Structure probing data (DMS and 2A3) for a 177-nucleotide construct. 2A3 adducts were read by reverse transcription with SuperScript II with manganese. Values are in units of 0.01, from 0 to 300, in steps of 10. DMS adducts were read by reverse transcription with MarathonRT. The 2A3 profile rests on 24,986 reads. The data come from the RNA Mapping Database (RMDB), library OK2TST. Values cover nucleotides 27 to 126.

RNA sequence: GGGAACGACUCGAGUAGAGUCGAAAACUGGAAAGCACCCGCCUGCCGAACCACGGCCCCGCAGCAUGGGGCAACCCUGCUGCUUUCCCAGUGCAGGCUGGUGAUGCCGCAUGCGGAGGGCCCUCGCAAUAACUAAUGCAUUCGUGCAUUAGUUAUUAAAAGAAACAACAACAACAAC
Reactivity to DMS in 0.01 (KOAc 150mM, MgCl2 10mM, bicine 150mM(pH8.5), 24C), signal-to-noise 9, nucleotides 027 to 126: c060u000g010g010a090a120a130g000c020a030c020c010c100g010c020c020u000g010c010c050g000a120a100c080c060a070c150g000g000c010c010c030c080g010c060a140g000c010a020u010g020g000g000g000c240a020a040c030c000c000u000g000c000u000g000c010u000u000u010c010c010c010a170g010u000g010c010a020g000g000c020u000g000g000u000g010a090u000g010c020c020g000c040a060u010g010c050g010g010a180g000g000g010c020c020c040u010c050g010c170
Reactivity to 2A3 in 0.01 (KOAc 150mM, MgCl2 10mM, bicine 150mM(pH8.5), 24C), signal-to-noise 5, nucleotides 027 to 126: c020u030g040g040a130a030a040g050c010a020c010c010c010g010c000c010u010g000c020c020g080a100a070c040c020a050c090g030g000c020c000c010c070g010c040a020g010c010a030u170g000g010g080g000c010a010a030c010c000c000u000g010c000u000g000c000u010u030u010c000c000c000a040g020u050g090c010a010g000g070c000u020g000g030u030g010a030u080g020c020c010g100c060a040u080g020c030g020g030a040g040g010g020c010c020c000u020c030g030c020